[RMDB]
RNA sequence: GGGAACGACUCGAGUAGAGUCGAAAAACUUUAUUCAUUACAACCAUAUACAUGUUGAGCUAUCUGGCGGAAAACAGAUGGCUCAUUAUUUCAAUAUUCUGCUAAGGACAGCCAGUGGUCGGCUGUCUUUAUGCUCUUAAUUCGUUAAGAGCAUAAAAAAAGAAACAACAACAACAAC
Reactivity to 2A3 in 0.01 (KOAc 150mM, MgCl2 10mM, bicine 150mM(pH8.5), 24C), signal-to-noise 8, nucleotides 027 to 126: a000c050u120u140u120a120u200u120c060a070u080u140a080c040a080a070c060c020a050u110a010u080a160c080a110u210g050u060u040g030a010g000c000u000a000u000c000u010g030g060c130g170g090a050a040a000a030c000a000g010a000u000g010g000c010u000c000a010u010u010a010u000u080u060c010a010a010u020a080u090u050c020u050g090c040u110a060a040g050g000a010c000a000g000c010c000a100g060u110g060g140u090c030g010g000c000u000g000u000c000
Reactivity to DMS in 0.01 (KOAc 150mM, MgCl2 10mM, bicine 150mM(pH8.5), 24C), signal-to-noise 9, nucleotides 027 to 126: a060c040u010u010u010a040u010u010c030a070u010u010a080c100a080a120c050c030a070u020a090u020a090c160a070u010g000u000u000g000a010g000c000u000a000u000c000u000g000g000c110g020g010a110a090a120a070c000a010g000a000u000g000g010c000u000c000a000u010u010a020u010u010u010c120a060a070u010a070u010u000c050u000g010c130u010a080a090g000g000a010c000a000g010c000c000a110g030u020g020g010u010c140g010g010c000u000g010u000c000
An RNA of 177 nucleotides, treated with 2A3 and DMS and read out base by base. It was measured as part of the RMDB libraries RFM100 and RFMREP. The reactions ran in a buffer of 150 mM KOAc, 10 mM MgCl2 and 150 mM bicine (pH 8.5), at 24 C.